An RNA of 177 nucleotides, treated with 2A3 and DMS and read out base by base.
The data come from the RNA Mapping Database (RMDB), library TTRDEL.
High 2A3 reactivity points to a flexible backbone, as in loops and unpaired stretches.
DMS adducts were read by reverse transcription with MarathonRT.
For 2A3 the reverse transcriptase was SuperScript II with manganese.
RNA sequence: GGGAACGACUCGAGUAGAGUCGAAAAGAUAUGGAGAUCUCCCCACCGCAUGCAAGCUAUGAAGUCGGAAACGAUGGAGCUUGCCGCUGCGAGGAUCUCCUAAGUCAAAUCGGGGUUCGCCCCGAAACACAUUCCAUAAGUUCGCUUAUGGAAUGUGAAAAGAAACAACAACAACAAC
Reactivity to 2A3 in 0.01 (KOAc 150mM, MgCl2 10mM, bicine 150mM(pH8.5), 24C), signal-to-noise 6, nucleotides 027 to 126: g040a060u170a150u240g000g000a020g000a010u010c050u130c050c010c010c030a020c000c010g020c000a010u170g000c000a000a010g000c010u040a200u300g040a060a020g020u000c000g010g060a090a060a040c010g000a000u030g000g030a010g000c000u000u000g020c000c000g000c010u000g000c010g010a050g000g020a000u000c010u000c000c000u020a130a020g090u080c100a070a060a220u070c010g000g000g000g000u040u070c300g160c000c000c000c000g000a000a000a000
Reactivity to DMS in 0.01 (KOAc 150mM, MgCl2 10mM, bicine 150mM(pH8.5), 24C), signal-to-noise 6, nucleotides 027 to 126: g000a090u010a290u010g000g000a020g000a010u000c010u000c110c010c020c020a300c130c020g000c010a010u010g000c000a010a010g000c000u000a210u000g010a110a170g000u000c000g010g010a110a070a130c010g010a020u000g000g000a020g000c000u010u000g000c000c030g010c020u000g000c000g000a130g020g000a010u000c000u000c000c000u000a030a060g000u000c130a040a100a120u000c000g010g000g010g000u000u010c240g010c010c010c000c000g010a010a050a180